RNA sequence: GGGAACGACUCGAGUAGAGUCGAAAACUUGUGAGGCAGCAUGCGAAAGGAUGGACUGUCCUACAUACCUUACGCCGGUCCAUUAAGGGCAUGCGAAAGGAUGGCGACGCAUGCGGCGGCUCACCACGCGUACGGAAACCAUCCACUCUCCAGGAUGACCUAAUAAUGGAUUCGUCCAUUAUUAGGUAAAAGAAACAACAACAACAAC
Reactivity to DMS in 0.01 (KOAc 150mM, MgCl2 10mM, bicine 150mM(pH8.5), 24C), signal-to-noise 4, nucleotides 027 to 156: c090u000u000g020u010g010a060g030g020c050a100g000c020a020u010g010c000g010a090a110a170g050g020a060u000g020g010a110c090u010g000u000c020c010u000a150c070a080u010a090c040c030u000u000a120c040g030c030c020g020g030u000c020c020a150u000u000a140a200g020g010g020c000a020u000g010c020g000a080a070a060g000g010a020u000g000g020c060g020a300c030g000c000a010u000g000c010g000g000c070g050g010c130u000c090a100c020c040a040c030g000c020g020u000a060c030g000g000a170a140a070c050c020a030u000c000c020a110c040u000c020u000c030c030a180g010g010a120u010g000
Reactivity to 2A3 in 0.01 (KOAc 150mM, MgCl2 10mM, bicine 150mM(pH8.5), 24C), signal-to-noise 8, nucleotides 027 to 156: c020u040u060g010u030g020a000g040g050c050a020g000c000a020u010g000c020g080a170a050a050g090g000a020u050g050g120a090c080u150g040u060c010c030u030a020c010a060u180a140c000c040u060u040a030c030g000c030c030g010g000u000c010c000a040u160u200a160a190g050g030g000c010a010u010g000c010g010a010a010a010g000g010a010u000g030g000c060g040a070c010g010c010a010u010g000c000g030g020c050g040g000c020u040c050a160c020c000a040c040g050c020g040u100a040c040g050g030a070a050a030c020c000a010u010c000c010a040c020u080c010u000c010c020a020g030g020a070u100g050
Chemical mapping of a 207-nucleotide RNA with DMS and 2A3. Reactivities are given for positions 27 through 156. For DMS, 8,963 sequencing reads were counted. The RNA was probed in 150 mM KOAc, 10 mM MgCl2 and 150 mM bicine (pH 8.5) at 24 C. Source: RMDB library OK3TST, as collected in RNAgym.